[RMDB]
RNA sequence: GGGAACGACUCGAGUAGAGUCGAAAACAGCGGCUACAACAUGAACCCUGUCUUCAUAUACAUGGUGCCGAAGCCCUGCCCCCGCGGGCGUAUCGUGCUCCCCGGUUUGUGCGCUCGGCCGGUACGCAUAGGAGUCCUAUUUCGAUAGGACUCCUAUAAAAGAAACAACAACAACAAC
Reactivity to DMS in 0.01 (KOAc 150mM, MgCl2 10mM, bicine 150mM(pH8.5), 24C), signal-to-noise 2, nucleotides 027 to 126: c060a050g020c140g030g000c020u000a050c080a070a110c120a090u010g010a100a090c040c020c030u010g010u000c120u000u000c140a050u000a130u000a070c040a040u000g010g020u010g020c080c050g010a090a150g000c020c010c030u000g020c040c020c010c030c030g020c120g030g010g010c020g030u000a000u000c040g020u020g000c020u000c060c040c030c040g000g010u010u010u000g000u010g010c060g020c060u010c090g000g020c040c000g000g000u000a030c060g020c090
Reactivity to 2A3 in 0.01 (KOAc 150mM, MgCl2 10mM, bicine 150mM(pH8.5), 24C), signal-to-noise 1, nucleotides 027 to 126: c000a010g050c130g030g020c050u100a050c020a070a000c010a100u190g000a040a010c030c080c020u000g070u020c080u280u130c070a050u150a010u070a170c040a030u180g000g000u040g070c100c070g010a020a000g020c000c010c000u040g020c000c000c000c000c000g050c090g030g020g020c020g010u050a030u080c070g000u120g040c000u030c020c020c010c000g050g060u140u150u130g080u060g060c000g030c020u020c080g010g030c000c020g000g000u020a010c010g000c040

Structure probing data (DMS and 2A3) for a 177-nucleotide construct. Conditions: 150 mM KOAc, 10 mM MgCl2 and 150 mM bicine (pH 8.5), 24 C. For DMS the reverse transcriptase was MarathonRT. It was measured as part of the RMDB library OK2TRN.